Structure probing data (2A3 and DMS) for a 177-nucleotide construct. The reactions ran in a buffer of 150 mM KOAc, 10 mM MgCl2 and 150 mM bicine (pH 8.5), at 24 C. DMS adducts were read by reverse transcription with MarathonRT.

[RMDB]
RNA sequence: GGGAACGACUCGAGUAGAGUCGAAAAACGGCGGGGGUAACUAUGACCCUCUUAAGGUAGCGUAAUACCUUGCCGCUUAAUUGGCGGCUUGCAUGAACGGAUUAACGACUCCCCCACUGUCCCCGGCUCGUUUAGAAUUGUUCGCAAUUCUAAACGAAAAAGAAACAACAACAACAAC
Reactivity to 2A3 in 0.01 (KOAc 150mM, MgCl2 10mM, bicine 150mM(pH8.5), 24C), signal-to-noise 9, nucleotides 027 to 126: a000c020g010g000c010g010g010g000g000g010u040a050a030c050u070a090u250g100a080c000c010c010u040c000u030u060a050a010g010g000u010a010g020c090g150u130a130a040u060a120c010c000u000u040g000c000c000g000c010u090u090a160a090u210u230g020g000c010g010g000c000u010u090g100c080a120u120g050a050a020c070g020g060a090u070u090a100a040c040g080a080c060u070c010c000c000c000c000a020c020u020g060u080c010c010c000c000g050g030c030
Reactivity to DMS in 0.01 (KOAc 150mM, MgCl2 10mM, bicine 150mM(pH8.5), 24C), signal-to-noise 6, nucleotides 027 to 126: a150c060g020g010c070g020g010g010g010g010u010a050a090c170u010a170u020g000a100c040c000c030u000c050u000u010a010a010g010g010u000a030g000c290g000u020a080a060u010a010c030c000u000u000g010c000c000g000c010u000u000a120a160u030u020g000g010c010g020g000c010u000u010g000c150a090u030g010a070a090c180g000g000a130u000u010a060a100c170g000a180c170u010c010c000c000c000c000a050c020u000g000u000c040c010c020c090g000g000c140